Structure probing data (DMS and 2A3) for a 177-nucleotide construct. 2A3 adducts were read by reverse transcription with SuperScript II with manganese. DMS adducts were read by reverse transcription with MarathonRT. Source: RMDB library RFM100, as collected in RNAgym. The 2A3 profile rests on 1,439 reads.

RNA sequence: GGGAACGACUCGAGUAGAGUCGAAAAGAGAUAGUGACGAAAAAUAACAAUACAGGACUCAUAGCCGAGGCCCUGUAAUUGGAAUGAGUACACUUUAAAUCCUUUAACAAGGACCAAUUGGAGGGCAUCGCGGAGUUAUUUUCGAAUAACUCCGCGAAAAAGAAACAACAACAACAAC
Reactivity to DMS in 0.01 (KOAc 150mM, MgCl2 10mM, bicine 150mM(pH8.5), 24C), signal-to-noise 3, nucleotides 027 to 126: g020a070g000a100u050a020g010u000g000a070c030g010a060a030a090a150a060u010a050a180c050a030a030u000a010c030a020g000g000a300c030u000c000a010u030a210g000c300c090g010a100g000g040c110c010c000u000g030u000a000a020u030u000g000g000a070a020u000g000a100g020u000a110c030a040c020u020u000u030a010a020a050u000c000c000u000u010u010a100a100c220a090a050g020g000a040c060c010a040a090u020u000g020g000a040g010g000g000c060a130
Reactivity to 2A3 in 0.01 (KOAc 150mM, MgCl2 10mM, bicine 150mM(pH8.5), 24C), signal-to-noise 2, nucleotides 027 to 126: g070a000g010a010u080a120g010u010g010a020c020g120a020a000a140a000a070u230a070a010c030a010a000u030a020c000a000g060g000a010c020u010c020a040u100a070g120c130c090g020a010g030g070c040c000c000u040g020u030a020a050u020u020g030g000a100a040u060g010a040g040u130a080c050a020c040u060u000u030a070a130a020u010c000c000u020u000u040a100a030c070a020a030g060g000a000c020c020a030a050u060u000g010g050a030g060g040g040c000a020